[RMDB]
RNA sequence: GGGAACGACUCGAGUAGAGUCGAAAAGGAUCCUUGGCACUUAUCUGGGACGAUCUGCGGAGCCUGUGCCUCUUCAGCUACCACCGCUUGAGAGACUUACUCUUGAUUGUAACGAGGAUUGUGGAACUAUCUGGGAAUAGUUCGCUAUUCCCAGAUAAAAAGAAACAACAACAACAAC
Reactivity to 2A3 in 0.01 (KOAc 150mM, MgCl2 10mM, bicine 150mM(pH8.5), 24C), signal-to-noise 9, nucleotides 027 to 126: g110g020a090u040c030c020u050u050g040g020c040a020c060u100u080a090u140c040u050g010g000g050a030c030g030a070u020c020u060g020c040g040g030a020g020c000c020u060g030u080g050c010c000u040c030u040u050c020a020g000c000u060a060c020c030a030c030c020g010c040u070u070g010a030g010a000g010a060c010u040u070a060c010u020c000u030u070g080a130u130u090g070u080a090a050c060g020a070g050g040a100u030u090g020u040g030g010a030a030c020
Reactivity to DMS in 0.01 (KOAc 150mM, MgCl2 10mM, bicine 150mM(pH8.5), 24C), signal-to-noise 5, nucleotides 027 to 126: g020g010a090u010c020c010u000u020g000g020c060a030c070u010u010a050u020c030u020g010g010g010a120c100g000a050u000c050u010g020c050g000g000a080g020c050c050u000g020u010g000c040c010u000c030u000u020c060a050g020c070u020a100c050c050a080c070c030g000c040u000u000g030a060g000a180g010a130c090u010u010a060c040u000c010u000u000g000a110u010u010g000u020a060a170c070g020a050g000g000a110u020u000g010u000g010g020a120a090c180
Notes:
The record gives the reactivity of an RNA of 177 nucleotides to 2A3 and DMS. DMS adducts were read by reverse transcription with MarathonRT. The reactions ran in a buffer of 150 mM KOAc, 10 mM MgCl2 and 150 mM bicine (pH 8.5), at 24 C. 2A3 adducts were read by reverse transcription with SuperScript II with manganese. Reactivities are rounded to 0.1 and cut off at 0 and 3.